[RMDB]
RNA sequence: GGGAACGACUCGAGUAGAGUCGAAAAAGAGCCUGGAUAAUCAUUUGGCUGGAUUUGUAACAACUGUGUAUCAUACAGCAUGAAAAUGCAUUUUCUAGCUUCCCUUGAAGUGAAAUGUGAGCAAAAAUGAUGCCAGCCACUCCCAGACCGGCCCAUAACUAGGUAUAUCGUUCGCGAUAUACCUAGUAAAAGAAACAACAACAACAAC
Reactivity to 2A3 in 0.01 (KOAc 150mM, MgCl2 10mM, bicine 150mM(pH8.5), 24C), signal-to-noise 4, nucleotides 027 to 156: a010g080a030g010c020c050u030g040g020a070u130a220a100u200c070a060u060u070u150g000g000c010u020g000g040a070u030u080u150g120u130a110a040c060a040a030c050u030g020u010g040u110a110u180c030a060u090a160c020a010g050c020a050u110g170a080a090a020a070u120g010c000a020u090u030u110u000c010u030a060g020c000u010u030c060c060c010u030u300g040a030a010g020u030g100a050a010a020u070g030u060g020a070g020c050a000a030a140a060a060u120g050a030u120g140c000c000a000g010c020c000a010c020u070c000c000c000a010g030a070c030c000g050g020c010c000c020a070u220a150
Reactivity to DMS in 0.01 (KOAc 150mM, MgCl2 10mM, bicine 150mM(pH8.5), 24C), signal-to-noise 2, nucleotides 027 to 156: a110g020a100g030c040c000u010g010g010a110u010a100a110u000c040a110u010u000u000g030g010c000u020g020g010a130u000u000u020g040u010a040a110c050a070a020c020u000g030u010g020u000a160u010c160a300u010a040c020a020g000c010a110u020g000a120a090a070a060u000g010c040a060u000u020u000u000c030u010a150g020c010u000u000c020c150c110u000u000g010a050a070g010u000g000a040a050a040u000g030u000g000a160g000c030a050a040a060a110a050u010g030a140u000g030c010c000a020g000c020c020a030c130u000c030c000c010a080g000a060c010c020g000g020c000c040c000a040u010a100